[RMDB]
RNA sequence: GGGAACGACUCGAGUAGAGUCGAAAAGCGUAAUCGCAAGUAUGUCGUCGCGACGAGGCAGGGUGGCGACGUAGUAUGUUUUUUUUUAUACUGCUGAUAGCGAGAGACAUACGAAGAAAGAAAGAAAGGGAUAUACAAUCUUCGGAUUGUAUAUCCCAAAAGAAACAACAACAACAAC
Reactivity to 2A3 in 0.01 (KOAc 150mM, MgCl2 10mM, bicine 150mM(pH8.5), 24C), signal-to-noise 3, nucleotides 027 to 126: g010c020g090u130a050a030u160c040g030c120a050a090g020u010a020u110g030u000c050g040u040c000g020c000g100a190c050g070a090g080g050c010a010g020g040g070u140g010g020c030g000a040c030g000u030a020g000u020a040u080g060u040u000u010u050u000u010u010u030u070a160u070a110c050u010g000c030u010g040a140u190a070g020c000g000a040g020a000g010a030c020a000u020a000c040g000a000a030g080a030a080a000g180a010a080a000g190a050a030a050
Reactivity to DMS in 0.01 (KOAc 150mM, MgCl2 10mM, bicine 150mM(pH8.5), 24C), signal-to-noise 3, nucleotides 027 to 126: g020c010g000u020a120a120u020c030g010c030a140a120g010u000a000u000g000u000c010g030u000c010g030c020g000a130c190g010a110g000g010c030a020g010g020g040u030g010g020c060g010a060c130g000u000a050g010u000a030u010g020u000u000u000u000u000u000u000u000u000a050u010a110c020u000g010c000u000g020a180u030a110g000c010g000a000g000a170g000a000c010a000u010a010c000g010a090a120g000a020a040a100g000a110a050a060g010a080a070a110
Source: RMDB library OK1LIB, as collected in RNAgym. Structure probing data (2A3 and DMS) for a 177-nucleotide construct. Values cover nucleotides 27 to 126. The reactions ran in a buffer of 150 mM KOAc, 10 mM MgCl2 and 150 mM bicine (pH 8.5), at 24 C.